[RMDB]
RNA sequence: GGGAACGACUCGAGUAGAGUCGAAAAAAAUUGCGUCUAGCAAUAAUGAGAUUGAGCAAUAACAGGUCUGUGAUGCCCUUAGAUGCACGCGCGCUACAAUAAUAUUUCCUAGACCGAGAGGUCCGGGGGAGCUGUUGUACUUCGGUACAACAGCUCCAAAAGAAACAACAACAACAAC
Reactivity to 2A3 in 0.01 (KOAc 150mM, MgCl2 10mM, bicine 150mM(pH8.5), 24C), signal-to-noise 1, nucleotides 027 to 126: a000a060a040u090u050g000c080g050u070c140u130a020g000c000a000a120u170a000a040u300g160a110g000a050u100u120g070a040g030c050a030a040u060a120a060c020a000g210g000u030c060u030g000u070g030a040u060g000c000c000c050u000u060a070g020a140u060g000c030a000c000g020c010g000c000g070c000u120a040c110a100a030u060a090a020u010a120u030u140u000c000c020u000a000g000a000c000c000g000a000g000a020g020g000u000c010c000g000g000g000
This 177-nucleotide RNA was probed chemically with 2A3.
For 2A3, 393 sequencing reads were counted.
For 2A3 the reverse transcriptase was SuperScript II with manganese.